Chemical mapping of a 170-nucleotide RNA with 2A3 and DMS.
[RMDB]
RNA sequence: GGGAACGACUCGAGUAGAGUCGAAAAGGGGGAACCGGAUUUACCUACGGGAAUCCCUGGGUUCCUCUGAUGUCCAGUCCCUCUCCCGUCCGAGUGAAGGGAGACUCCGGAACUCCAGUCAUUUGAGCAGGUAUGCCGUUCGCGGCAUACAAAAGAAACAACAACAACAAC
Reactivity to 2A3 in 0.01 (KOAc 150mM, MgCl2 10mM, bicine 150mM(pH8.5), 24C), signal-to-noise 9, nucleotides 027 to 129: g000g000g010g000g000a000a000c010c010g000g000a000u020u040u270a260c000c010u030a040c200g040g000g010a000a000u020c010c000c020u040g090g020g000u010u010c010c000u000c020u010g050a050u130g050u030c020c000a000g040u010c000c000c000u010c000u000c000c000c010g060u020c020c000g120a040g040u180g050a020a010g000g000g000a010g010a000c020u030c030c010g020g040a060a040c010u010c010c010a020g050u050c050a110u040u070u140g070a080g020c040a000g040
Reactivity to DMS in 0.01 (KOAc 150mM, MgCl2 10mM, bicine 150mM(pH8.5), 24C), signal-to-noise 4, nucleotides 027 to 129: g010g000g000g000g000a030a020c050c000g010g010a010u020u010u030a090c040c030u040a120c200g000g000g000a050a020u020c020c000c260u020g000g000g000u010u000c000c000u030c000u010g000a070u000g010u040c040c020a080g000u000c000c000c010u010c000u020c040c010c020g010u030c050c040g010a040g050u000g000a050a070g000g030g030a050g000a090c010u030c000c000g020g030a030a120c000u020c020c010a050g030u030c080a120u030u050u060g030a120g020c020a070g010
High 2A3 reactivity points to a flexible backbone, as in loops and unpaired stretches. DMS adducts were read by reverse transcription with MarathonRT. The data come from the RNA Mapping Database (RMDB), library 15KLIB. For 2A3, 27,779 sequencing reads were counted. The reactions ran in a buffer of 150 mM KOAc, 10 mM MgCl2 and 150 mM bicine (pH 8.5), at 24 C.